[RMDB]
RNA sequence: GGGAACGACUCGAGUAGAGUCGAAAAGGCGAUCGAGAGGCCCUCUCAUUAAUGCGGAGGUGUCACGCUGACAGAAUGAUAUUAGAUGUCCGCUUCCGGUUGCAUCGCGGCGAUGAUUACAUAGGACAUCGAUUACCCAUUAGCUUCGGGGAAGCAAGCAUACGGAUACUUUCGAGUAUCCGUAUGCAAAAGAAACAACAACAACAAC
Reactivity to 2A3 in 0.01 (KOAc 150mM, MgCl2 10mM, bicine 150mM(pH8.5), 24C), signal-to-noise 3, nucleotides 027 to 156: g040g000c000g020a070u070c090g070a010g020a060g150g000c000c000c010u000c000u000c000a130u080u300a160a200u180g050c080g000g000a000g000g050u180g010u050c040a020c040g010c020u030g010a010c010a040g100a110a140u160g090a060u070a120u180u180a050g030a050u000g010u000c000c030g000c000u090u000c010c010g050g010u050u050g010c040a050u060c040g020c090g080g000c040g010a030u050g030a040u040u190a090c100a060u160a110g000g020a000c000a010u010c000g000a000u000u080a060c010c000c000a050u100u140a020g010c040u000u050c050g070g010g020g010a020a000g010c050a020a040
Reactivity to DMS in 0.01 (KOAc 150mM, MgCl2 10mM, bicine 150mM(pH8.5), 24C), signal-to-noise 1, nucleotides 027 to 156: g030g030c010g030a070u010c060g000a120g000a090g020g020c010c010c000u000c090u020c040a170u010u000a100a100u000g000c060g000g000a150g000g030u010g030u010c040a060c030g010c000u030g010a240c070a160g000a090a150u000g010a080u000a100u000u000a090g010a100u000g010u000c030c010g000c010u000u000c050c040g000g000u000u020g050c030a190u020c040g010c050g040g000c040g010a190u000g000a100u010u000a150c110a110u000a130g000g010a040c040a080u010c000g000a080u010u000a050c030c030c000a100u000u020a140g000c050u000u000c060g000g010g020g010a010a050g010c000a060a300